[RMDB]
RNA sequence: GGGAACGACUCGAGUAGAGUCGAAAACGAUCCUCGAGAGAGGAUCGACGAGUCUUCGGACUCGAUUACCGCGUUGAUGUGCCGCGGGGCUACGAUGGUAUUGUGGGAAAGAAUACCAUUGUACCUUCUUGUCGUAGCCGAACAACUCGCACGUCGAAGCUCAUAAUAUGUUCGCAUAUUAUGAGCUAAAAGAAACAACAACAACAAC
Reactivity to DMS in 0.01 (KOAc 150mM, MgCl2 10mM, bicine 150mM(pH8.5), 24C), signal-to-noise 5, nucleotides 027 to 156: c030g010a010u000c000c000u000c000g010a300g010a300g010a010g020g000a000u000c000g010a070c030g020a020g020u000c010u000u000c300g040g000a040c000u000c000g000a080u010u000a210c030c000g020c080g000u000u000g020a020u000g020u000g010c030c030g010c030g010g020g000g010c010u000a010c010g000a030u000g010g030u000a010u000u000g040u000g010g030g010a160a120a230g010a200a150u000a090c000c000a020u010u000g010u000a010c000c030u000u010c150u000u010g020u010c010g030u000a040g000c030c000g010a060a100c050a050a080c100u000c090g010c000a020c010g010u000c000g010a130
Reactivity to 2A3 in 0.01 (KOAc 150mM, MgCl2 10mM, bicine 150mM(pH8.5), 24C), signal-to-noise 9, nucleotides 027 to 156: c020g000a000u000c000c000u010c010g050a060g000a000g000a000g030g000a000u000c000g000a020c000g000a000g000u010c010u050u150c250g090g000a000c010u000c000g010a060u130u180a090c000c000g000c000g010u020u130g000a010u010g000u000g000c000c000g010c010g030g040g000g000c000u000a000c000g010a010u120g000g000u000a000u010u050g010u020g010g010g050a070a240a120g140a090a090u100a120c000c000a000u000u030g000u000a010c020c000u150u200c120u130u300g030u020c000g000u000a000g000c000c000g010a040a010c030a030a060c040u090c120g000c000a000c000g000u000c010g010a030